[RMDB]
RNA sequence: GGGAACGACUCGAGUAGAGUCGAAAAGCUAGCCAGCGCACGAUGAGACUGCCGUGACGUCUAGCCUGCGUCUCAACUAGUCUCCAUCAAUCAAAACGCUGGGAUUGAUGUACGAGACUAGUACACAGUGUAUGCACUUGUUCGCAGGUGUAUACACAAAAGAAACAACAACAACAAC
Reactivity to DMS in 0.01 (KOAc 150mM, MgCl2 10mM, bicine 150mM(pH8.5), 24C), signal-to-noise 9, nucleotides 027 to 126: g000c020u010a070g010c080c020a020g010c050g010c030a030c020g000a080u010g000a100g010a080c070u010g020c060c030g010u000g010a060c030g010u010c010u010a070g010c020c030u010g010c050g000u000c010u000c030a130a040c010u000a000g000u000c000u000c000c000a010u000c010a010a010u010c010a060a070a100a110c120g010c100u010g000g010g000a010u000u000g000a000u000g000u030a090c170g000a010g000a010c000u000a000g010u000a060c180a070c190a100
Reactivity to 2A3 in 0.01 (KOAc 150mM, MgCl2 10mM, bicine 150mM(pH8.5), 24C), signal-to-noise 9, nucleotides 027 to 126: g010c010u010a010g010c010c030a010g010c010g000c020a010c010g030a030u100g020a020g050a060c050u060g040c030c010g020u020g020a090c010g010u040c010u010a010g000c000c000u020g020c010g040u000c010u000c010a020a010c000u000a000g000u000c000u000c000c000a000u000c000a000a000u000c010a000a030a050a080c100g030c080u090g040g010g000a000u000u000g000a000u000g010u050a050c050g000a000g000a000c000u000a000g000u040a000c070a000c000a020